[RMDB]
An RNA of 207 nucleotides, treated with 2A3 and read out base by base. Reactivities are given for positions 27 through 156. As a SHAPE reagent, 2A3 marks flexible, mostly unpaired nucleotides at the ribose 2'-OH. The data come from the RNA Mapping Database (RMDB), library M2RFPK. For 2A3, 578 sequencing reads were counted. The reactions ran in a buffer of 150 mM KOAc, 10 mM MgCl2 and 150 mM bicine (pH 8.5), at 24 C.
RNA sequence: GGGAACGACUCGAGUAGAGUCGAAAAAACGCGAAAGUCGGACGGCGGCCAUGAGUCGCAACGCAAAGCCGCGGCAAGUGGAGUUAGCCAGAAGAGACUAGGCUUUGGUUUCUUCAAGUGAAGCGGUAAAAGGUUCGAGACUUCGGUCUCGAACCAAGAUGCCAUCAAUGUUCGCAUUGAUGGCAUCAAAAGAAACAACAACAACAAC
Reactivity to 2A3 in 0.01 (KOAc 150mM, MgCl2 10mM, bicine 150mM(pH8.5), 24C), signal-to-noise 1, nucleotides 027 to 156: a000a000c110g050c060g050a120a070a040g180u140c070g030g100a100c120g030g030c020g020g020c000c040a200u150g030a020g060u060c000g000c020a190a030c020g050c070a100a130a000g040c050c010g000c010g000g000c040a100a000g030u010g010g050a050g030u110u140a020g050c000c010a000g020a060a000g030a000g070a060c050u060a020g090g060c060u070u030u130g000g000u020u050u000c030u000u010c010a000a110g010u020g080a050a000g010c010g030g000u100a130a120a040a050g000g000u000u000c000g000a000g010a010c000u040u100c260g030g000u000c000u000c010g020a010a010c000c000a000a000